Chemical mapping of a 177-nucleotide RNA with DMS and 2A3. For DMS, 1,608 sequencing reads were counted. Conditions: 150 mM KOAc, 10 mM MgCl2 and 150 mM bicine (pH 8.5), 24 C. For DMS the reverse transcriptase was MarathonRT. For 2A3 the reverse transcriptase was SuperScript II with manganese.
[RMDB]
RNA sequence: GGGAACGACUCGAGUAGAGUCGAAAAGAAGACGCUGUGCAAAGUGUUGGAGUGCAAGGCAACGGAACUAACGGGUAACAUGCAUUAUUCCUCUGAUCGCGUUGCUAUUACCCGACCAUAUGUGGUCUGAAAGGUUGCCUUUCGAGGCAACCUUUCAAAAAGAAACAACAACAACAAC
Reactivity to DMS in 0.01 (KOAc 150mM, MgCl2 10mM, bicine 150mM(pH8.5), 24C), signal-to-noise 2, nucleotides 027 to 126: g030a300a030g020a050c030g000c000u030g000u010g050c090a100a130a030g040u020g020u000u000g010g000a120g000u000g000c090a050a120g000g000c080a060a010c070g000g000a010a020c060u070a080a110c270g010g000g000u000a010a010c060a120u070g000c090a080u000u030a010u020u000c000c040u000c150u020g000a040u000c020g040c050g000u000u010g000c070u060a160u000u050a090c060c010c010g000a060c030c000a060u000a040u060g000u030g010g010u000c030
Reactivity to 2A3 in 0.01 (KOAc 150mM, MgCl2 10mM, bicine 150mM(pH8.5), 24C), signal-to-noise 1, nucleotides 027 to 126: g100a020a000g000a000c000g000c000u000g120u130g090c000a110a100a090g000u100g030u030u010g020g000a000g010u090g100c080a050a090g100g090c040a000a000c000g000g080a010a010c020u010a080a040c070g010g010g010u030a000a000c050a170u130g020c030a030u000u120a060u210u200c000c000u160c100u120g020a070u000c050g000c000g120u000u010g030c000u090a070u040u100a050c050c020c010g050a000c000c010a020u000a130u300g150u100g040g000u070c020